Source information:
The data come from the RNA Mapping Database (RMDB), library OK2TST. Structure probing data (2A3 and DMS) for a 177-nucleotide construct. High 2A3 reactivity points to a flexible backbone, as in loops and unpaired stretches.

RNA sequence: GGGAACGACUCGAGUAGAGUCGAAAAGGCUACUACCCUUCCGAGGAGCAGGAGCGAACCCUUUCCCUCCUCCCGGUGAUGGAGUUCGUCUCGCAGGUGGUCUUUCUCAAGAAGGUGCGGAAGGGCACCUGUCCCUGGUAUUCGUACCAGGGACAGGAAAAGAAACAACAACAACAAC
Reactivity to 2A3 in 0.01 (KOAc 150mM, MgCl2 10mM, bicine 150mM(pH8.5), 24C), signal-to-noise 2, nucleotides 027 to 126: g020g020c010u030a020c010u120a100c040c000c000u020u030c030c030g070a120g040g060a110g050c080a070g070g120a040g020c020g000a020a030c010c000c000u020u050u000c010c000c010u050c010c020u040c040c030c000g040g020u100g010a030u060g020g050a120g040u030u020c040g090u070c020u000c030g100c040a040g000g080u030g020g000u010c000u010u060u010c020u000c010a010a110g120a040a050g100g020u120g010c020g000g050a010a020g000g000g010c000a030
Reactivity to DMS in 0.01 (KOAc 150mM, MgCl2 10mM, bicine 150mM(pH8.5), 24C), signal-to-noise 5, nucleotides 027 to 126: g010g020c010u000a030c010u000a190c040c000c000u000u020c060c050g010a090g000g010a140g020c120a090g020g010a050g000c040g010a020a030c020c010c010u000u000u010c090c020c010u010c080c030u000c020c030c050g010g000u010g010a050u000g000g010a070g010u000u000c020g010u010c020u010c030g030c060a140g010g010u000g010g000u000c010u000u000u000c020u000c030a090a130g010a130a050g010g020u010g010c020g010g000a050a050g010g010g020c300a030
The DMS profile rests on 5,860 reads. DMS adducts were read by reverse transcription with MarathonRT.